Overview: An RNA of 207 nucleotides, treated with 2A3 and read out base by base. For 2A3 the reverse transcriptase was SuperScript II with manganese. Values cover nucleotides 27 to 156. Conditions: 150 mM KOAc, 10 mM MgCl2 and 150 mM bicine (pH 8.5), 24 C.
RNA sequence: GGGAACGACUCGAGUAGAGUCGAAAAGAAAGAAAGUUCUUAGGAAGAGCAGCAGAGUGACCGGCACGACGAAGCUGCAGCAAUCGGUGUAAUGGCGAAAGCCAUGACCAAGGAGCUAAAGCCGGGACGGACGAACACCGUCGACCCUAAGAACAAACAUCGGUCGACGAUUCGUCGUCGACCGAUGAAAAGAAACAACAACAACAAC
Reactivity to 2A3 in 0.01 (KOAc 150mM, MgCl2 10mM, bicine 150mM(pH8.5), 24C), signal-to-noise 1, nucleotides 027 to 156: g150a040a070a000g100a010a070a030g030u000u000c000u020u000a050g040g040a200a080g040a020g010c020a000g000c000a000g020a020g070u050g020a000c000c000g000g040c010a000c030g300a030c000g000a060a000g000c000u030g020c000a000g010c000a010a050u020c030g000g000u030g080u230a030a000u000g010g000c000g070a070a000a000g000c000c000a000u010g000a000c010c010a010a070g030g010a040g010c020u020a050a000a000g010c000c010g020g020g000a000c000g000g020a040c090g070a130a110c050a020c080c000g000u000c000g020a040c000c000c000u010a010a000g000a000a000c040a000a010a000